Conditions: 150 mM KOAc, 10 mM MgCl2 and 150 mM bicine (pH 8.5), 24 C. This 207-nucleotide RNA was probed chemically with 2A3.
[RMDB]
RNA sequence: GGGAACGACUCGAGUAGAGUCGAAAAGAAAGAAAGAAAUUAGCUCGCCAGUUAGCGAGGUCUGUCCCCACACGACAGAUAAUCGGGUGCAACUCCCGCCCCUUUUCCGAGGGUCAUCGGAAUCAAAAAAACUCAGGCAACUUCGGUUGCCUGAGAACUGCAAUUAUUCCUUCGGGAAUAAUUGCAGAAAAGAAACAACAACAACAAC
Reactivity to 2A3 in 0.01 (KOAc 150mM, MgCl2 10mM, bicine 150mM(pH8.5), 24C), signal-to-noise 1, nucleotides 027 to 156: g030a010a100a020g030a050a060a010g070a040a150a020u140u070a060g020c010u010c010g000c010c040a110g100u100u160a010g020c000g010a010g000g000u000c000u000g050u000c020c040c050c010a050c000a010c050g020a000c010a010g000a000u020a020a040u080c010g010g000g000u010g010c020a030a010c010u030c000c000c000g020c010c000c000c000u110u100u020u080c000c000g000a000g000g000g030u090c020a000u030c030g000g020a000a020u060c060a000a090a010a020a000a020a010c010u000c000a000g000g000c000a000a000c000u040u050c160g150g000u010u000g000c010c010u040g000a010g000a010a000

For 2A3 the reverse transcriptase was SuperScript II with manganese.